Conditions: 150 mM KOAc, 10 mM MgCl2 and 150 mM bicine (pH 8.5), 24 C. This 177-nucleotide RNA was probed chemically with 2A3 and DMS.
[RMDB]
RNA sequence: GGGAACGACUCGAGUAGAGUCGAAAAAAUGGACGUUCGAGAUUCGUCCACGUCACCAUGAGUUAAAAUUUAACUCUCAGUAAAUUUUAACUCAUGAGUGAAUCUGCGAGUUAAAUUUUAACUCAGGCAAUGCAGCAGACUUCGGUCUGCUGCAUUGAAAAGAAACAACAACAACAAC
Reactivity to 2A3 in 0.01 (KOAc 150mM, MgCl2 10mM, bicine 150mM(pH8.5), 24C), signal-to-noise 4, nucleotides 027 to 126: a000a040u060g020g010a010c040g020u100u100c120g060a080g010a300u130u130c000g000u000c000c000a030c050g060u030c010a030c040c010a100u010g000a010g000u000u010a000a000a000a000u000u000u030a090a070c030u050c020u020c070a010g020u100a000a030a090u000u040u010u030a010a010c000u020c030a010u070g020a010g010u010g030a010a050u010c020u060g100c070g040a000g000u010u030a070a140a240u160u160u040u020a000a000c000u000c010a010g000g020
Reactivity to DMS in 0.01 (KOAc 150mM, MgCl2 10mM, bicine 150mM(pH8.5), 24C), signal-to-noise 2, nucleotides 027 to 126: a160a110u020g000g040a010c000g000u000u040c170g020a200g010a200u000u040c000g000u010c000c000a050c180g000u020c030a030c000c000a030u010g000a030g000u000u010a000a010a000a050u000u000u000a000a020c020u000c090u000c210a040g020u000a040a060a050u000u030u010u030a040a040c090u000c040a040u010g000a060g060u000g000a060a070u030c000u000g000c130g000a000g030u000u000a000a030a110u010u020u020u000a000a000c000u000c000a100g000g020
For 2A3, 1,859 sequencing reads were counted. The DMS profile rests on 1,921 reads. The data come from the RNA Mapping Database (RMDB), library RFM100.